[RMDB]
RNA sequence: GGGAACGACUCGAGUAGAGUCGAAAAAACGUAAAACCUUACGAAGGUUGGAAAGUUGAGUCCUUCAGGUAAGUGAAUGGUAUUCUCAUAGCCACACUCAAAUCGGAAGUGCUAGCAAAUUCACUUGCCUCUCACUCGUUUUCGAACGAGUGAGAGGAAAAGAAACAACAACAACAAC
Reactivity to DMS in 0.01 (KOAc 150mM, MgCl2 10mM, bicine 150mM(pH8.5), 24C), signal-to-noise 2, nucleotides 027 to 126: a040a010c000g000u020a130a110a020a010c000c030u000u000a120c250g000a080a010g010g010u000u000g020g000a010a120a150g000u000u000g010a240g030u000c050c000u010u000c120a070g010g040u020a020a000g000u000g000a060a010u000g000g020u000a080u020u000c180u000c130a170u020a070g020c020c030a090c040a040c040u010c050a090a070a100u000c260g030g000a080a080g020u010g010c020u000a040g010c190a050a020a100u000u000c010a010c000u010u000g000

This 177-nucleotide RNA was probed chemically with DMS. The RNA was probed in 150 mM KOAc, 10 mM MgCl2 and 150 mM bicine (pH 8.5) at 24 C. For DMS the reverse transcriptase was MarathonRT.